[RMDB]
The record gives the reactivity of an RNA of 177 nucleotides to 2A3 and DMS. The data come from the RNA Mapping Database (RMDB), library OK2TRN. For DMS, 2,271 sequencing reads were counted. Conditions: 150 mM KOAc, 10 mM MgCl2 and 150 mM bicine (pH 8.5), 24 C.
RNA sequence: GGGAACGACUCGAGUAGAGUCGAAAAAUCAGGGAGCCGACCUGCAUCUGGCCGCUGUCGAUGCGUAGCCCACCGAACCAGAUCAGUGCGACGCUGGAUGCGUUGAUGGUCAGCGUGGUCACCGGCAUACUUCGUUUCAGUUCGCUGAAACGAAGUAAAAAGAAACAACAACAACAAC
Reactivity to 2A3 in 0.01 (KOAc 150mM, MgCl2 10mM, bicine 150mM(pH8.5), 24C), signal-to-noise 2, nucleotides 027 to 126: a020u130c030a040g050g000g060a030g030c000c080g110a180c010c000u050g010c000a020u000c030u030g030g000c040c040g030c030u080g070u150c070g020a040u080g020c030g030u090a030g030c020c050c010a030c020c110g000a060a060c020c010a030g020a140u090c020a010g080u030g110c060g040a050c070g010c030u020g060g070a070u100g040c020g020u030u090g100a140u160g000g010u040c020a030g040c070g030u100g040g010u030c000a020c070c000g020g000c010a080
Reactivity to DMS in 0.01 (KOAc 150mM, MgCl2 10mM, bicine 150mM(pH8.5), 24C), signal-to-noise 2, nucleotides 027 to 126: a090u000c050a100g000g030g030a110g040c020c020g010a110c050c020u000g030c080a030u010c020u000g000g020c030c050g030c090u010g000u010c050g010a040u000g030c070g010u000a080g000c070c020c020a060c060c030g000a090a100c120c090a080g010a050u000c020a040g010u000g010c070g040a060c060g020c030u000g010g000a030u000g000c020g010u000u000g010a110u000g000g020u000c020a080g020c110g040u000g020g020u010c030a090c080c030g000g000c090a220